Structure probing data (2A3) for a 207-nucleotide construct. Values cover nucleotides 27 to 156. The data come from the RNA Mapping Database (RMDB), library OK3TST. The RNA was probed in 150 mM KOAc, 10 mM MgCl2 and 150 mM bicine (pH 8.5) at 24 C.
[RMDB]
RNA sequence: GGGAACGACUCGAGUAGAGUCGAAAAACAACAUCAAUAUCCUUUCCAGUCACUUUUUCGAUAUAAUCAACUGCAAGUUUAUGGGUUUUAGCUAGGUCCACAAGCUUUCUGUCUACAAGGUUUCCAACAACAAUAUCUUGAGUGAUAUUUGCUGCUACCUAAUGCAGCUCUUCGGAGCUGCAUUAGGAAAAGAAACAACAACAACAAC
Reactivity to 2A3 in 0.01 (KOAc 150mM, MgCl2 10mM, bicine 150mM(pH8.5), 24C), signal-to-noise 2, nucleotides 027 to 156: a000c080a020a020c020a020u180c030a000a140u060a150u150c040c020u020u060u100c060c030a060g040u040c020a020c090u080u060u010u070u070c050g030a040u040a060u020a130a200u130c060a030a140c020u090g000c040a000a080g000u020u070u120a030u100g000g010g020u000u040u000u080a000g020c080u070a020g080g080u000c020c000a010c000a030a030g010c010u010u080u030c030u030g100u010c010u030a040c010a070a030g040g000u030u070u040c020c020a040a030c010a030a030c000a120a000u030a020u030c020u030u150g140a160g090u050g080a150u000a030u030u060u110g030c040u010g050c000u060a040